[RMDB]
RNA sequence: GGGAACGACUCGAGUAGAGUCGAAAAAGUGACACAUAUACAGACAAGUGCCGGGGAACUAAGCGGAGAGACAAACCUUCUCAAGGCAAUACAUGAACCGAAGCUGACUGCUUUCCCCUGCAAUUUGAGUCCUAACCAAUUUCGAUUGGUUAGGACUAAAAGAAACAACAACAACAAC
Reactivity to DMS in 0.01 (KOAc 150mM, MgCl2 10mM, bicine 150mM(pH8.5), 24C), signal-to-noise 3, nucleotides 027 to 126: a020g000u000g040a120c070a070c090a090u000a120u020a120c110a110g000a200c070a050a080g010u000g000c080c160g010g030g010g000a050a020c160u000a200a050g020c010g000g030a290g000a100g010a100c210a050a080a110c090c050u000u000c080u000c090a080a260g010g010c140a060a070u000a060c200a070u000g000a070a160c040c050g050a160a120g000c030u000g010a140c180u010g020c150u000u010u000c000c000c000c090u000g000c090a030a030u000u000u000g010
Reactivity to 2A3 in 0.01 (KOAc 150mM, MgCl2 10mM, bicine 150mM(pH8.5), 24C), signal-to-noise 2, nucleotides 027 to 126: a010g160u140g090a040c030a000c020a120u120a000u140a300c130a050g140a020c040a070a050g030u000g030c020c020g020g030g010g000a000a000c010u040a110a000g000c010g000g040a000g000a000g010a020c060a030a130a060c000c030u090u060c070u030c100a030a010g010g000c010a020a020u100a120c120a060u080g040a030a020c020c010g000a020a010g020c020u060g060a090c040u040g020c040u070u020u000c000c010c000c000u000g000c010a030a040u050u000u110g050